Conditions: 150 mM KOAc, 10 mM MgCl2 and 150 mM bicine (pH 8.5), 24 C. Structure probing data (DMS and 2A3) for a 177-nucleotide construct. Reactivities are given for positions 27 through 126. For DMS, 4,178 sequencing reads were counted. Source: RMDB library OK1LIB, as collected in RNAgym.

[RMDB]
RNA sequence: GGGAACGACUCGAGUAGAGUCGAAAAGGCUUCAGGAAGCUGACCGACGCCAGGCUCGCGUCGAUCCGGCCGGCCUUCAGAUCCAUCACGACGUUGUCGAUGGUGUCGUAGGUUGAGAUCUGCACGCCAGGGAGUAGCGAUUCGUCGCUACUCCCUGAAAAGAAACAACAACAACAAC
Reactivity to DMS in 0.01 (KOAc 150mM, MgCl2 10mM, bicine 150mM(pH8.5), 24C), signal-to-noise 3, nucleotides 027 to 126: g030g010c030u010u000c090a110g000g000a090a030g000c020u010g000a260c220c030g020a000c020g030c100c150a170g030g020c040u010c030g000c040g040u000c010g000a020u020c010c040g050g000c020c030g010g000c010c030u010u000c000a040g000a010u000c030c000a060u000c000a060c050g020a030c020g010u000u010g000u000c120g010a100u030g000g000u000g000u010c000g020u010a070g000g000u000u010g000a150g010a020u000c000u000g000c150a070c300g020c070
Reactivity to 2A3 in 0.01 (KOAc 150mM, MgCl2 10mM, bicine 150mM(pH8.5), 24C), signal-to-noise 6, nucleotides 027 to 126: g040g020c040u080u100c180a120g130g070a120a030g020c030u010g030a050c040c010g000a000c020g020c060c050a130g160g060c050u060c060g010c000g020u000c000g010a020u010c050c000g010g040c040c010g010g010c000c000u020u010c010a010g000a020u010c010c010a010u030c010a000c020g030a030c050g090u060u150g170u270c110g070a140u160g050g070u060g030u020c020g000u020a190g050g010u080u050g070a110g000a110u030c010u030g010c120a030c070g100c050